[RMDB]
RNA sequence: GGGAACGACUCGAGUAGAGUCGAAAACGGUGCCAGCCGCCGCGGUAAUACCGGCAGUCCAAGUGAUGGCCGAUAUUAUUGGGCCUAAAGCGUCCGUAGCUUGCUGUGUAAGUCCAUUGGGAAAUCGCGGUAAACCGGAAUUCGUUCCGGUUUACCGAAAAGAAACAACAACAACAAC
Reactivity to 2A3 in 0.01 (KOAc 150mM, MgCl2 10mM, bicine 150mM(pH8.5), 24C), signal-to-noise 2, nucleotides 027 to 126: c020g050g020u040g000c030c020a000g040c060c040g020c010c010g220c020g010g020u000a010a000u010a030c020c000g020g000c000a010g020u000c000c000a240a110g090u160g190a020u050g050g030c010c000g000a000u010a000u020u000a030u010u040g030g020g020c020c010u120a070a050a020g030c010g020u040c010c030g020u000a010g020c030u000u030g000c010u000g000u050g040u070a050a030g020u010c010c010a060u060u120g050g030g030a040a150a000u140c100g000
Reactivity to DMS in 0.01 (KOAc 150mM, MgCl2 10mM, bicine 150mM(pH8.5), 24C), signal-to-noise 2, nucleotides 027 to 126: c080g000g000u020g000c000c010a040g000c150c290g010c070c020g010c010g030g000u000a060a020u000a010c080c020g020g030c010a140g030u000c000c000a180a160g020u020g000a010u010g010g020c000c000g000a030u000a010u000u000a020u000u000g020g000g000c000c030u010a150a220a130g000c010g010u000c020c030g010u000a100g000c000u000u010g020c040u000g040u000g030u020a110a060g010u040c020c000a180u010u000g000g000g010a030a140a070u010c130g010

An RNA of 177 nucleotides, treated with 2A3 and DMS and read out base by base. The reactions ran in a buffer of 150 mM KOAc, 10 mM MgCl2 and 150 mM bicine (pH 8.5), at 24 C.